[RMDB]
RNA sequence: GGGAACGACUCGAGUAGAGUCGAAAAUCUGGUCACGAUGGAUGAAUUAGUGGUUUUCGGGCAUGUUAUCGACGAAUUGAACACACGUGGUAUCGACCACUCGUCCAUGUCCUCGGGUCACAUGAAGAGACAUACACGGAUGUCUUAAUGAGACGUAAUGUAGAGAAAACUUCGGUUUUCUCUACAUAAAAGAAACAACAACAACAAC
Reactivity to DMS in 0.01 (KOAc 150mM, MgCl2 10mM, bicine 150mM(pH8.5), 24C), signal-to-noise 5, nucleotides 027 to 156: u000c030u010g010g000u010c020a060c040g010a060u010g020g020a090u000g010a100a100u000u010a110g030u000g020g020u000u000u000u000c030g020g020g010c020a050u020g010u000u000a060u000c020g010a060c030g000a040a170u000u000g010a080a100c090a080c060a110c110g020u000g020g020u000a160u000c120g010a100c010c010a030c050u000c020g000u010c010c020a040u010g010u000c020c020u000c030g020g000g000u000c040a090c050a110u000g010a110a200g000a070g010a030c030a050u000a060c090a100c110g030g000a080u000g010u000c020u000u000a070a090u000g010a140g000a100c050g020u000a100
Reactivity to 2A3 in 0.01 (KOAc 150mM, MgCl2 10mM, bicine 150mM(pH8.5), 24C), signal-to-noise 9, nucleotides 027 to 156: u030c020u050g040g020u060c040a020c090g070a090u100g020g060a040u020g040a090a170u120u060a090g020u030g040g030u030u030u060u120c060g000g000g030c040a020u020g030u110u180a160u230c060g010a020c010g040a090a080u150u180g110a210a030c070a010c010a010c160g020u020g000g030u110a130u290c070g090a090c010c000a010c010u020c010g010u000c000c010a020u020g020u020c000c010u010c020g030g000g010u020c020a020c030a090u070g060a070a070g050a010g010a030c010a010u070a050c070a010c130g160g010a030u020g000u000c000u020u090a140a070u140g060a040g020a060c030g030u090a110
Structure probing data (DMS and 2A3) for a 207-nucleotide construct. The reactions ran in a buffer of 150 mM KOAc, 10 mM MgCl2 and 150 mM bicine (pH 8.5), at 24 C. For DMS, 13,765 sequencing reads were counted. Values cover nucleotides 27 to 156. The 2A3 profile rests on 9,343 reads. For DMS the reverse transcriptase was MarathonRT.